Chemical mapping of a 207-nucleotide RNA with DMS and 2A3. Reactivities are rounded to 0.1 and cut off at 0 and 3. Conditions: 150 mM KOAc, 10 mM MgCl2 and 150 mM bicine (pH 8.5), 24 C. For DMS the reverse transcriptase was MarathonRT. The DMS profile rests on 1,272 reads.
RNA sequence: GGGAACGACUCGAGUAGAGUCGAAAAAAGCUCAAUUAUAAGGAGUGCUAGCUCAAUACAGAAUAGACUGUUAGAAGUCAAGUCUCAAGAUAAGAGUUCAUUGAGUUCAGAAGAAGGGGAAAUUUGCACAAGACUACAACAAAACCUCAACAAAGGAAAUGUGACUACCUUUCGAGGUAGUCACAUUAAAAGAAACAACAACAACAAC
Reactivity to DMS in 0.01 (KOAc 150mM, MgCl2 10mM, bicine 150mM(pH8.5), 24C), signal-to-noise 1, nucleotides 027 to 156: a120a040g000c040u000c000a070a230u020u000a250u010a110a090g030g000a100g050u000g000c150u000a090g000c020u000c020a020a110u000a150c040a080g010a070a150u000a150g000a070c010u010g040u000u000a180g000a090a130g000u000c050a050a130g010u010c000u010c000a120a100g050a230u000a040a110g020a100g000u000u000c040a070u010u000g010a040g010u010u000c030a070g010a170a040g010a050a050g010g000g000g010a030a020a110u000u000u000g040c020a100c000a100a060g000a110c050u000a020c010a010a130c090a040a020a130a080c020c010u000c050a040a100c070a040a020a020g000g040a000
Reactivity to 2A3 in 0.01 (KOAc 150mM, MgCl2 10mM, bicine 150mM(pH8.5), 24C), signal-to-noise 1, nucleotides 027 to 156: a000a000g060c060u060c040a100a060u100u100a080u140a300a000g010g000a010g010u020g020c020u010a000g000c000u010c010a010a030u120a100c030a000g090a050a090u120a070g060a060c000u020g020u120u120a080g010a090a040g000u080c000a020a000g100u030c020u000c000a020a040g020a030u130a060a010g020a030g030u040u000c010a020u040u030g010a000g020u050u080c060a050g000a100a010g050a010a030g100g030g000g040a000a070a060u060u060u200g000c000a000c000a030a060g020a070c030u050a050c070a060a000c020a000a140a000a020c000c020u050c020a040a050c020a000a090a080g010g040a040